[RMDB]
RNA sequence: GGGAACGACUCGAGUAGAGUCGAAAAGCAUCGCGGCAUGCUACGAUCGUAAUAUAUGCCGCGUAGCGCCGCGUACGCGCGCGGCAUCGCGAUCGUACGCGUAUAAUCGUAGCAUUACGUAGCUACGUAAUGAUCUGCCGUUCGCGGCAGAUCAUUAAAAAGAAACAACAACAACAAC
Reactivity to 2A3 in 0.01 (KOAc 150mM, MgCl2 10mM, bicine 150mM(pH8.5), 24C), signal-to-noise 2, nucleotides 027 to 126: g070c010a070u080c030g010c030g040g040c040a010u070g020c010u010a000c010g050a070u070c020g020u040a150a080u100a030u070a010u220g000c000c000g000c010g000u020a020g030c010g000c020c040g070c050g030u040a020c010g000c000g000c000g000c000g020g000c030a000u040c020g030c020g020a020u050c050g000u060a030c040g000c000g020u030a040u120a090a090u100c020g000u010a010g000c000a030u030u140a090c100g050u080a040g020c020u010a020c020g040
Reactivity to DMS in 0.01 (KOAc 150mM, MgCl2 10mM, bicine 150mM(pH8.5), 24C), signal-to-noise 3, nucleotides 027 to 126: g000c070a110u010c030g030c020g010g000c080a010u010g010c090u000a010c020g000a010u000c090g010u000a210a080u010a100u010a140u000g020c020c010g020c000g030u000a020g040c020g010c060c060g010c170g000u000a060c010g010c030g010c010g030c010g010g030c090a010u000c080g010c000g020a050u020c100g010u000a040c110g000c000g010u010a080u000a110a080u000c010g040u000a030g000c010a100u010u010a080c130g000u000a110g000c020u000a030c060g000

This 177-nucleotide RNA was probed chemically with 2A3 and DMS. Values are in units of 0.01, from 0 to 300, in steps of 10. Conditions: 150 mM KOAc, 10 mM MgCl2 and 150 mM bicine (pH 8.5), 24 C. The data come from the RNA Mapping Database (RMDB), library OK2TRN. The 2A3 profile rests on 2,115 reads. For 2A3 the reverse transcriptase was SuperScript II with manganese.